[RMDB]
RNA sequence: GGGAACGACUCGAGUAGAGUCGAAAAACGGCGGGCUACGGCCAGCCGAAUCGGGCCAAAGGCAGUCGCCCGACGACACAGGCGAUCGUUCGCCCAAGCGCUGCACACGACUAUACGUAGUCGUGAAUUGAUCACGCAACCUUCGGGUUGCGUGAAACAAGGGUAAAAACUUCGGUUUUUACCCUUGAAAAGAAACAACAACAACAAC
Reactivity to 2A3 in 0.01 (KOAc 150mM, MgCl2 10mM, bicine 150mM(pH8.5), 24C), signal-to-noise 1, nucleotides 027 to 156: a030c000g010g000c030g000g010g030c000u020a040c130g130g030c000c000a010g000c000c000g020a010a040u050c000g020g000g000c060c140a150a100a180g150g010c020a020g000u000c030g030c040c040c000g000a000c020g010a000c010a000c030a110g200g080c000g030a080u120c090g090u130u110c030g220c000c000c000a050a060g030c030g030c140u070g000c000a000c010a010c060g030a000c000u000a000u090a150c300g120u030a000g000u000c000g000u010g010a000a000u140u120g070a010u010c010a000c010g000c000a000a000c000c000u010u090c160g040g010g000u000u000g000c000g010u030g000a000a000a000
Source information: The data come from the RNA Mapping Database (RMDB), library M2RFPK. Chemical mapping of a 207-nucleotide RNA with 2A3. Reactivities are rounded to 0.1 and cut off at 0 and 3. Reactivities are given for positions 27 through 156. For 2A3, 532 sequencing reads were counted. Conditions: 150 mM KOAc, 10 mM MgCl2 and 150 mM bicine (pH 8.5), 24 C.